Chemical mapping of a 177-nucleotide RNA with 2A3 and DMS. Values are in units of 0.01, from 0 to 300, in steps of 10. The DMS profile rests on 7,420 reads. For 2A3, 5,394 sequencing reads were counted. For DMS the reverse transcriptase was MarathonRT. The reactions ran in a buffer of 150 mM KOAc, 10 mM MgCl2 and 150 mM bicine (pH 8.5), at 24 C.

RNA sequence: GGGAACGACUCGAGUAGAGUCGAAAAAUGUCAGUUCUGAUUGAGAAUGACUUCAGCUGAAGCUGUCAUCUCUCAGUAAAAGAUUUGCUCUGUGCAUCGGAACUCGAGCCAUGCUAGUCCAGUGGCAAGGCUGUAGAUAUUUCGAUAUCUACAGCCUAAAAGAAACAACAACAACAAC
Reactivity to 2A3 in 0.01 (KOAc 150mM, MgCl2 10mM, bicine 150mM(pH8.5), 24C), signal-to-noise 4, nucleotides 027 to 126: a000u130g020u060c020a000g000u030u000c010u030g000a000u090u040g000a010g010a010a030u020g000a020c000u090u060c130a090g020c060u230g120a180a020g040c020u030g010u020c000a010u010c020u000c000u000c060a000g050u070a040a130a050a000g070a070u060u060u200g020c020u050c070u150g160u110g040c000a040u040c030g010g020a010a020c010u020c060g020a010g010c010c010a030u040g020c030u100a060g210u030c000c060a020g020u020g030g010c040a050
Reactivity to DMS in 0.01 (KOAc 150mM, MgCl2 10mM, bicine 150mM(pH8.5), 24C), signal-to-noise 6, nucleotides 027 to 126: a050u010g020u010c090a050g020u000u000c010u000g010a050u010u010g010a020g000a040a010u000g000a020c050u000u010c100a050g030c150u020g000a170a140g010c020u000g000u000c010a000u000c130u000c000u010c010a050g010u010a050a070a090a080g010a050u000u000u010g000c040u000c110u000g020u000g020c120a060u000c030g000g000a030a030c020u000c080g010a080g010c000c000a040u000g010c080u000a110g000u000c020c010a240g020u000g010g020c040a140